[RMDB]
RNA sequence: GGGAACGACUCGAGUAGAGUCGAAAAGACGCCUGAUGGCGAACGUGCGCAAGAUAAGAAUGGUGGUAUAUACUGCCGAGAAUAACUAAUGGACGGCAGAGCGCACGUACCACCAACGUCCACCAGACAUGGGAUUAUGAUUCGUCAUAAUCCCAUGAAAAGAAACAACAACAACAAC
Reactivity to DMS in 0.01 (KOAc 150mM, MgCl2 10mM, bicine 150mM(pH8.5), 24C), signal-to-noise 8, nucleotides 027 to 126: g010a140c020g020c020c010u020g040a170u050g000g000c010g010a120a010c020g040u000g000c000g020c000a210a130g010a100u040a070a080g000a080a100u000g010g010u010g000g000u010a120u040a080u020a150c000u000g010c000c000g010a100g000a170a080u030a080a130c250u050a130a090u030g000g000a170c000g020g000c010a010g000a120g000c010g000c010a000c010g000u000a020c030c030a140c140c100a090a060c170g000u010c000c000a060c020c020a160g000a190
Reactivity to 2A3 in 0.01 (KOAc 150mM, MgCl2 10mM, bicine 150mM(pH8.5), 24C), signal-to-noise 9, nucleotides 027 to 126: g070a000c020g030c020c030u230g150a170u260g020g010c020g010a010a010c000g000u030g000c000g000c040a080a060g030a280u150a120a040g060a100a070u060g010g000u010g010g020u020a070u010a010u030a140c000u000g000c010c000g020a030g070a080a140u250a080a010c100u150a100a090u180g110g100a030c000g000g000c000a000g010a010g010c000g000c000a000c010g010u000a010c000c010a040c000c020a000a030c080g070u030c010c010a010c000c010a020g030a050

This 177-nucleotide RNA was probed chemically with DMS and 2A3. High 2A3 reactivity points to a flexible backbone, as in loops and unpaired stretches. 2A3 adducts were read by reverse transcription with SuperScript II with manganese. Values cover nucleotides 27 to 126. Source: RMDB library OK1LIB, as collected in RNAgym.